[RMDB]
Annotation
Chemical mapping of a 177-nucleotide RNA with DMS and 2A3. Source: RMDB library 15KREP, as collected in RNAgym. DMS adducts were read by reverse transcription with MarathonRT. The DMS profile rests on 1,512 reads. For 2A3, 967 sequencing reads were counted.

RNA sequence: GGGAACGACUCGAGUAGAGUCGAAAAUUAGCCAUCCGAGUGGACGUUGUCCUCCUUCGGAUGCCCAGGUCGGACCGCGAGGAGGUGGAGAUGCCAUGCCGACCCGAAGAGGAAAGAAGGACGCGAGCUAAGGAAGACUGUUCGCAGUCUUCCUUAGAAAAGAAACAACAACAACAAC
Reactivity to DMS in 0.01 (KOAc 150mM, MgCl2 10mM, bicine 150mM(pH8.5), 24C), signal-to-noise 2, nucleotides 027 to 126: u000u020a090g010c160c010a030u010c000c010g020a030g020u010g010g000a030c060g030u000u020g020u000c050c010u000c020c090u000u000c000g020g000a010u000g010c020c030c010a120g010g000u000c070g010g000a090c060c090g010c080g020a050g010g000a070g020g030u000g000g020a120g000a080u000g010c060c040a020u000g030c040c000g000a080c020c000c040g000a050a060g010a130g000g000a060a040a070g000a100a060g000g000a060c050g000c060g000a100g010
Reactivity to 2A3 in 0.01 (KOAc 150mM, MgCl2 10mM, bicine 150mM(pH8.5), 24C), signal-to-noise 1, nucleotides 027 to 126: u080u070a030g060c040c020a010u050c010c010g010a010g080u040g000g040a020c250g090u120u300g030u090c000c030u030c000c040u070u040c000g020g000a000u010g020c000c000c000a040g000g000u050c030g050g000a090c000c040g050c000g070a030g020g060a010g000g040u090g010g020a140g000a050u150g030c020c010a020u060g040c000c000g040a060c140c010c010g060a080a040g050a060g010g010a020a110a030g090a030a000g040g000a010c000g000c050g060a020g000